RNA sequence: GGGAACGACUCGAGUAGAGUCGAAAAGAGGGUUGGUUCGCCAACCCUCCAUUAAAAUCAGCGGUAAAUAAUUAGCAGGCGUUACCGCUGAACGGCUGCAUAGACUCAGUCUGUUCGCAGACUGAAAUCGAUAUUUGUUGUUCGCAACAAAUAUCGAAAAAGAAACAACAACAACAAC
Reactivity to DMS in 0.01 (KOAc 150mM, MgCl2 10mM, bicine 150mM(pH8.5), 24C), signal-to-noise 3, nucleotides 027 to 126: g010a010g060g020g010u000u000g000g010u010u010c280g010c000c000a000a000c000c000c010u000c000c020a020u000u010a060a090a090a130u000c000a000g000c000g000g010u000a010a020a060u000a060a090u000u010a120g020c070a040g000g020c170g000u000u000a030c010c000g000c000u010g000a010a060c100g000g020c040u000g010c090a140u000a050g000a150c170u010c010a000g000u000c010u000g010u000u010c170g010c010a030g010a020c030u000g000a000a060a070
Reactivity to 2A3 in 0.01 (KOAc 150mM, MgCl2 10mM, bicine 150mM(pH8.5), 24C), signal-to-noise 2, nucleotides 027 to 126: g010a000g000g000g000u010u010g020g000u050u090c150g030c040c000a000a010c000c010c010u010c010c000a010u010u000a000a010a020a080u020c000a010g000c000g160g060u070a030a080a050u110a100a160u210u240a030g070c070a020g130g040c060g000u030u010a030c010c010g000c000u010g000a010a020c020g080g020c020u080g000c030a100u070a160g050a090c010u020c030a010g010u000c020u050g020u040u000c180g000c040a000g000a010c010u020g000a050a030a010

Source information
The record gives the reactivity of an RNA of 177 nucleotides to DMS and 2A3. Conditions: 150 mM KOAc, 10 mM MgCl2 and 150 mM bicine (pH 8.5), 24 C. For DMS the reverse transcriptase was MarathonRT. The DMS profile rests on 2,211 reads. It was measured as part of the RMDB library M2PK50.